[RMDB]
RNA sequence: GGGAACGACUCGAGUAGAGUCGAAAAGCUGUGUGAUGAUGGUCCCGCACAUCAUCGUAUGAGUGGAGACACUCAUACACACAGACGCGGGAAUAUGCAGUUGUGGUCUACAGCACAACUGAAUGUGUUGAGAAACACAUUCGCAUAUAGAUGUAGACGUAGCUAGCUAGUUCGCUAGCUAGCUACGAAAAGAAACAACAACAACAAC
Reactivity to 2A3 in 0.01 (KOAc 150mM, MgCl2 10mM, bicine 150mM(pH8.5), 24C), signal-to-noise 5, nucleotides 027 to 156: g080c060u040g020u040g050u050g140a010u000g000a010u000g000g050u050c010c000c000g000c000a000c000a000u000c000a000u010c030g000u010a020u000g000a000g010u000g020g050a060g020a040c010a000c000u010c010a010u020a000c000a000c000a010c000a030g230a130c090g000c010g010g010g180a020a070u300a090u180g090c040a010g010u000u010g000u000g010g000u000c000u010a000c010a000g000c010a000c010a010a000c010u000g010a000a000u000g000u000g010u010u010g070a080g050a080a040a000c000a000c000a000u020u010c040g000c080a040u160a010u100a170g100a090u000g000u000a000g000a010
Reactivity to DMS in 0.01 (KOAc 150mM, MgCl2 10mM, bicine 150mM(pH8.5), 24C), signal-to-noise 1, nucleotides 027 to 156: g010c030u000g040u020g070u000g030a040u020g010a090u010g000g030u000c000c000c020g000c030a230c030a010u030c020a020u010c030g010u000a010u000g030a030g080u000g000g030a300g020a300c000a010c030u000c050a020u000a020c020a170c030a100c110a040g050a130c100g000c040g000g000g000a080a050u000a050u000g000c010a180g060u000u000g000u000g000g060u010c020u000a020c010a080g000c020a050c020a010a050c080u000g020a050a040u000g020u000g010u010u000g010a300g010a100a060a010c010a020c000a000u000u000c000g030c040a130u000a070u000a170g000a110u000g030u000a010g000a110